Structure probing data (DMS and 2A3) for a 177-nucleotide construct. Reactivities are rounded to 0.1 and cut off at 0 and 3. The RNA was probed in 150 mM KOAc, 10 mM MgCl2 and 150 mM bicine (pH 8.5) at 24 C. Source: RMDB library OK2TRN, as collected in RNAgym. 2A3 is a SHAPE reagent: it acylates the 2'-hydroxyl of flexible nucleotides of all four kinds.
RNA sequence: GGGAACGACUCGAGUAGAGUCGAAAAAGCUUAGCUCUUCAAGUCCUUGGUCAAAUUUGGCAAAUCGCAGAUGCUGAGAAUCGGGGAUUUCUUACAUUUUCUGGCUUUGUAAUUGCCAUGAGGUUGAUCGUAUUAGUGACUUCGGUCACUAAUACGAAAAAGAAACAACAACAACAAC
Reactivity to DMS in 0.01 (KOAc 150mM, MgCl2 10mM, bicine 150mM(pH8.5), 24C), signal-to-noise 2, nucleotides 027 to 126: a050g010c070u000u010a110g010c060u010c020u000u000c040a090a170g000u000c010c010u000u000g030g000u010c030a050a110a170u000u000u000g010g000c010a010a040a070u010c170g010c030a010g000a010u000g030c040u000g010a030g000a030a030u010c120g000g000g000g000a220u000u010u010c010u000u010a090c100a040u000u000u000u000c030u010g040g020c000u000u000u020g000u010a020a120u000u010g000c010c000a020u020g020a040g010g000u010u000g000a090
Reactivity to 2A3 in 0.01 (KOAc 150mM, MgCl2 10mM, bicine 150mM(pH8.5), 24C), signal-to-noise 1, nucleotides 027 to 126: a000g040c020u050u030a000g000c010u030c020u110u060c060a140a000g000u000c000c020u040u050g060g010u030c020a030a100a190u050u110u060g020g000c070a020a050a130u100c060g010c010a000g060a060u180g000c020u080g000a000g000a100a050u060c070g030g100g000g010a080u150u120u010c010u010u100a100c010a070u060u030u010u110c000u010g010g000c000u110u040u040g070u020a090a080u070u040g020c000c010a030u060g020a030g050g080u060u020g030a060